[RMDB]
The data come from the RNA Mapping Database (RMDB), libraries RFM100 and RFMREP. This 177-nucleotide RNA was probed chemically with DMS and 2A3. Reactivities are given for positions 27 through 126.
RNA sequence: GGGAACGACUCGAGUAGAGUCGAAAACUUCUCCCCCCCUUUCAUCCUCCAAGAACCAUUGUAAAACUCGCAGUGACAAAGAGAGUGGGUAGGGUUUGAGGCCCCUGUUCCUGAGGACUUGAGUGCUCACUAGCAGUGAGUUCGCUCACUGCUAGUGAAAAGAAACAACAACAACAAC
Reactivity to DMS in 0.01 (KOAc 150mM, MgCl2 10mM, bicine 150mM(pH8.5), 24C), signal-to-noise 1, nucleotides 027 to 126: c300u000u010c010u020c000c000c000c000c030c000c030u000u020u000c060a120u000c050c030u000c010c100a110a070g000a090a080c080c020a140u000u000g000u000a080a060a090a130c040u000c050g040c070a040g050u020g050a060c060a040a080a090g000a130g010a060g030u010g000g000g020u000a060g010g000g000u000u000u010g000a110g000g000c000c010c000c020u010g010u000u010c020c010u000g000a040g000g000a020c050u000u000g010a060g040u000g020c080u000
Reactivity to 2A3 in 0.01 (KOAc 150mM, MgCl2 10mM, bicine 150mM(pH8.5), 24C), signal-to-noise 3, nucleotides 027 to 126: c010u040u000c000u030c000c000c010c000c000c020c000u020u030u060c030a070u020c000c020u010c030c030a040a010g050a050a060c020c000a090u030u090g040u140a090a090a060a060c020u020c050g000c040a040g020u050g110a040c050a010a200a030g100a010g010a030g020u110g000g000g000u020a090g000g010g060u070u000u140g050a020g080g000c010c000c000c040u050g000u030u010c000c000u010g030a030g000g020a010c010u130u110g050a040g050u130g030c000u010